Structure probing data (2A3 and DMS) for a 177-nucleotide construct. DMS adducts were read by reverse transcription with MarathonRT. Values are in units of 0.01, from 0 to 300, in steps of 10.
[RMDB]
RNA sequence: GGGAACGACUCGAGUAGAGUCGAAAAGUGGUCGAGUGCGAAGCACUGGGGUAGAGAAAUAAAAAGAUAGAGAUCUACCCCGUCAGUCAGUCACUCUCUGUCUGAAUCUCUCUCUCAAAGACCACGAAUGAUAUUACUCGUUCGCGAGUAAUAUCAUAAAAGAAACAACAACAACAAC
Reactivity to 2A3 in 0.01 (KOAc 150mM, MgCl2 10mM, bicine 150mM(pH8.5), 24C), signal-to-noise 9, nucleotides 027 to 126: g020u010g010g000u000c010g020a020g020u030g010c090g110a110a040g030c070a020c120u100g010g000g020g010u090a000g020a010g090a040a130a060u270a050a140a060a030a000g100a070u180a020g100a010g010a040u020c000u020a030c000c000c010c000g010u010c000a010g010u000c000a000g030u020c040a060c130u060c010u000c010u020g010u000c000u000g040a110a100u020c010u000c000u000c000u000c000u000c070a120a080a020g000a000c000c000a000c000g000a010
Reactivity to DMS in 0.01 (KOAc 150mM, MgCl2 10mM, bicine 150mM(pH8.5), 24C), signal-to-noise 9, nucleotides 027 to 126: g010u000g010g010u000c000g000a040g030u010g000c030g030a120a120g020c120a030c030u010g010g000g020g010u020a000g010a020g000a070a100a080u040a050a090a110a120a060g010a050u020a030g010a040g000a090u010c060u000a090c020c020c010c050g000u020c050a050g010u010c060a040g010u010c160a130c150u010c050u010c020u010g010u000c000u000g000a090a120u020c050u000c010u000c020u000c010u000c070a100a100a120g010a010c000c000a010c000g010a100